[RMDB]
RNA sequence: GGGAACGACUCGAGUAGAGUCGAAAAUCGCGCAGGCGCUGUAAGGUUUCAACCGAAAUCAGCGGCACGUCGCCGUAAAGCAUUAAAAUAUCUUCAUCGUCGCUAAAGAAGGGCGCGGCCUGCUGCAGCCAGCAGGUGCUUUCGAGCACCUGCUGGCAAAAGAAACAACAACAACAAC
Reactivity to 2A3 in 0.01 (KOAc 150mM, MgCl2 10mM, bicine 150mM(pH8.5), 24C), signal-to-noise 2, nucleotides 027 to 126: u150c000g030c000g000c010a000g000g000c000g000c040u000g000u020a050a200g010g090u160u190u060c090a220a020c110c020g000a020a020a010u100c000a010g000c030g010g000c000a000c020g190u300c150g000c040c040g140u300a000a000a000g100c120a070u230u300a000a000a000a000u250a010u080c030u250u000c070a300u080c110g220u040c080g020c160u180a260a000a000g090a020a260g020g000g000c000g000c000g000g000c000c000u000g000c010u120g140c090a030
The record gives the reactivity of an RNA of 177 nucleotides to 2A3. The 2A3 profile rests on 419 reads.